[RMDB]
RNA sequence: GGGAACGACUCGAGUAGAGUCGAAAAUUACACUGAGAGCAUUUAGCCUGAUUACUCUUUAAAUCACAUCAGGCAAUAGAGAGAAACUCGAGAGGUGAAAACCCCACAGCAUUCUGAAAUGUAUUUGAAGGCAACGCUACCUUCGGGUAGCGUUGAACCAUGGAUUAUGCUUCGGCAUAAUCCAUGGAAAAGAAACAACAACAACAAC
Reactivity to 2A3 in 0.01 (KOAc 150mM, MgCl2 10mM, bicine 150mM(pH8.5), 24C), signal-to-noise 1, nucleotides 027 to 156: u120u030a010c030a010c010u130g000a000g000a000g160c120a120u000u020u120a090g040c020c000u000g000a000u030u220a200c030u060c040u040u140u190a170a130a140u260c090a040c050a080u000c000a000g000g040c000a010a010u000a000g050a000g010a000g080a100a150a000c000u000c080g040a040g010a070g090g000u000g000a000a000a000a040c000c000c040c000a040c060a000g040c010a010u160u010c080u150g080a160a040a090u020g030u060a110u120u200u150g050a110a040g090g000c000a000a040c000g010c000u000a000c000c000u090u030c100g020g000g000u000a000g000c000g000u000u000g000a000a010
Chemical mapping of a 207-nucleotide RNA with 2A3. Values cover nucleotides 27 to 156. The reactions ran in a buffer of 150 mM KOAc, 10 mM MgCl2 and 150 mM bicine (pH 8.5), at 24 C. It was measured as part of the RMDB library M2RFPK.